[RMDB]
RNA sequence: GGGAACGACUCGAGUAGAGUCGAAAACAGAGGCAGGUGUGAAAACUACAGCUGGUCUCAGACACCCAAGUUCAAGAUGCCGUGUGCCAUCUACAUGGCAGUGCUCGGCAGGCUGUGGGAAUCCAGGGCUGGGCUGGAGCUAAAGGACCCUGAGAAGGUACAGAUGUGAUUUCGAUCACAUCUGUACAAAAGAAACAACAACAACAAC
Reactivity to 2A3 in 0.01 (KOAc 150mM, MgCl2 10mM, bicine 150mM(pH8.5), 24C), signal-to-noise 3, nucleotides 027 to 156: c060a020g020a040g030g000c010a000g010g060u060g030u050g100a160a100a050a010c040u080a020c020a050g050c000u040g010g070u060c010u010c010a000g050a010c060a030c020c000c010a030a030g030u060u150c080a070a010g050a150u080g000c000c010g030u040g040u030g060c010c030a040u000c030u140a110c070a130u020g000g000c030a010g010u030g070c020u020c020g000g000c000a000g030g000c010u040g040u060g210g000g010a020a070u060c030c040a040g020g010g000c000u040g050g040g070c020u040g070g010a030g000c020u090a120a020a040g030g030a040c010c020c000u040g020a060g070a100a040g130
Reactivity to DMS in 0.01 (KOAc 150mM, MgCl2 10mM, bicine 150mM(pH8.5), 24C), signal-to-noise 2, nucleotides 027 to 156: c070a130g000a100g010g030c020a040g000g030u010g070u010g010a080a080a100a100c020u010a070c010a080g040c020u000g040g020u020c010u000c030a100g010a110c060a250c030c000c070a000a170g000u010u000c060a080a120g000a110u010g000c010c020g070u000g030u010g040c020c040a050u020c140u030a110c120a070u000g010g020c000a120g010u000g000c020u000c000g030g020c010a070g010g020c020u000g060u000g030g000g010a170a150u000c020c000a060g000g010g000c030u000g010g050g020c000u000g000g020a070g010c010u000a050a120a090g000g020a060c010c010c000u010g000a120g010a080a120g000

Chemical mapping of a 207-nucleotide RNA with 2A3 and DMS. The data come from the RNA Mapping Database (RMDB), library OK3TST. For DMS, 3,362 sequencing reads were counted. Conditions: 150 mM KOAc, 10 mM MgCl2 and 150 mM bicine (pH 8.5), 24 C. Values are in units of 0.01, from 0 to 300, in steps of 10. In probing experiments dimethyl sulfate is read out at A N1 and C N3, which are open when not base-paired.